[RMDB]
RNA sequence: GGGAACGACUCGAGUAGAGUCGAAAAUGGAAGUUCGUUCUAGUGGUCCUCGGCGUAUGGAUCGGUGCUGGCGAGGUCGGCCUGAGCUUGUUCUACUGGUGGUAUCACACACUCGACAAGACGGCCGCUCGCAAUGUCGGUUCGCCGACAUUGCGAGAAAAGAAACAACAACAACAAC
Reactivity to DMS in 0.01 (KOAc 150mM, MgCl2 10mM, bicine 150mM(pH8.5), 24C), signal-to-noise 2, nucleotides 027 to 126: u010g000g030a070a030g010u030u000c060g010u000u000c000u030a100g000u020g000g000u000c030c000u000c080g030g070c060g110u040a040u020g020g000a020u000c070g000g010u010g030c220u010g000g010c070g000a070g020g000u020c000g020g010c000c000u020g000a100g030c000u020u000g000u000u000c110u000a090c300u020g020g000u000g040g000u000a180u010c180a150c070a020c010a090c120u040c300g000a020c020a020a080g040a010c020g000g040c000c000g000
Reactivity to 2A3 in 0.01 (KOAc 150mM, MgCl2 10mM, bicine 150mM(pH8.5), 24C), signal-to-noise 2, nucleotides 027 to 126: u090g040g000a060a030g000u070u060c020g030u080u000c010u020a060g100u060g090g050u030c000c010u010c030g020g100c040g080u070a150u250g060g040a020u020c020g020g000u060g000c080u030g000g040c020g050a000g000g090u080c010g000g000c040c000u000g000a050g050c000u030u020g030u110u080c050u060a100c050u100g040g010u000g000g000u160a090u300c030a000c010a010c010a000c050u050c030g020a050c000a010a010g060a030c000g030g000c000c000g010
Structure probing data (DMS and 2A3) for a 177-nucleotide construct. High DMS reactivity at an A or C suggests that its Watson-Crick edge is free. For DMS the reverse transcriptase was MarathonRT. The data come from the RNA Mapping Database (RMDB), library OK1LIB. Conditions: 150 mM KOAc, 10 mM MgCl2 and 150 mM bicine (pH 8.5), 24 C. The DMS profile rests on 2,059 reads.